[RMDB]
RNA sequence: GGGAACGACUCGAGUAGAGUCGAAAAGAGGGGGCCGAGUGAGGCUUAUCCCGGGGAUCGGCGUCGCCCCCACAUAGCAGACCCCGGGUCCCCUUCCGAACGAGGGGGACGGUCCUUGGACCUCAGGAUAGAGGAUUGUUCGCAAUCCUCAAAAGAAACAACAACAACAAC
Reactivity to DMS in 0.01 (KOAc 150mM, MgCl2 10mM, bicine 150mM(pH8.5), 24C), signal-to-noise 8, nucleotides 027 to 129: g030a090g040g010g000g000g070c000c010g010a070g000u070g050a100g010g040c050u030u030a010u020c040c010c010g000g000g010g020a140u000c030g020g040c000g020u030c130g000c050c000c010c000c030a070c120a090u010a180g000c030a050g000a040c020c010c010c010g010g010g010u000c000c010c010c020u000u020c000c080g010a130a300c170g000a040g030g020g000g000g000a010c100g000g000u020c020c040u010u030g030g010a080c030c000u000c050a050g000g000a120u000a140
Reactivity to 2A3 in 0.01 (KOAc 150mM, MgCl2 10mM, bicine 150mM(pH8.5), 24C), signal-to-noise 9, nucleotides 027 to 129: g160a070g000g010g010g000g000c010c030g020a020g020u140g030a120g030g010c020u040u060a090u130c000c000c000g000g000g010g000a300u030c010g020g000c030g040u070c040g070c010c010c000c060c000a030c030a030u150a010g010c010a000g000a020c000c000c000c000g000g000g000u010c000c000c000c000u010u000c020c070g140a120a090c080g010a010g000g000g000g000g000a000c000g000g000u000c000c000u040u040g120g050a250c010c000u010c020a030g030g030a070u130a100
Chemical mapping of a 170-nucleotide RNA with DMS and 2A3. The reactions ran in a buffer of 150 mM KOAc, 10 mM MgCl2 and 150 mM bicine (pH 8.5), at 24 C. For DMS the reverse transcriptase was MarathonRT. The data come from the RNA Mapping Database (RMDB), library 15KLIB.